[RMDB]
RNA sequence: GGGAACGACUCGAGUAGAGUCGAAAAGUGUGGAAACUGGUUUGUCAAGGGCCACCCAGUGUGGGCUCAGGAAGAGAAGGAAUGUGACUGAGGCUGGGUGUGGCAGAGGAGAGCACAGCCAGUUGUGUCACCGCGCAUCUUUCGAGAUGCGCGGUGAAAAAGAAACAACAACAACAAC
Reactivity to DMS in 0.01 (KOAc 150mM, MgCl2 10mM, bicine 150mM(pH8.5), 24C), signal-to-noise 1, nucleotides 027 to 126: g050u020g020u000g000g000a160a010a070c020u030g020g060u000u020u010g030u000c000a030a220g100g000g040c090c000a100c000c000c000a000g040u020g000u030g040g060g000c000u000c000a020g000g020a190a080g000a190g020a040a100g030g000a130a060u020g000u000g000a290c000u000g080a040g000g000c020u000g010g000g000u020g010u000g030g030c040a030g000a190g000g010a010g000a120g030c090a000c040a000g010c000c000a020g000u000u000g000u010g080
Reactivity to 2A3 in 0.01 (KOAc 150mM, MgCl2 10mM, bicine 150mM(pH8.5), 24C), signal-to-noise 2, nucleotides 027 to 126: g080u040g010u030g010g000a050a030a030c000u000g010g100u140u190u170g160u030c120a160a110g070g030g000c000c000a000c000c000c000a020g010u050g000u040g190g050g060c000u000c000a000g010g090a150a180g140a010g000a000a150g300g070a130a100u180g030u070g210a120c020u000g000a000g000g000c000u010g000g000g000u110g020u020g150g010c040a000g000a000g230g000a070g000a000g000c050a010c000a010g000c060c000a000g000u000u010g000u000g010
Structure probing data (DMS and 2A3) for a 177-nucleotide construct. 2A3 adducts were read by reverse transcription with SuperScript II with manganese. The reactions ran in a buffer of 150 mM KOAc, 10 mM MgCl2 and 150 mM bicine (pH 8.5), at 24 C. The data come from the RNA Mapping Database (RMDB), library RFM100. The 2A3 profile rests on 654 reads. Reactivities are given for positions 27 through 126.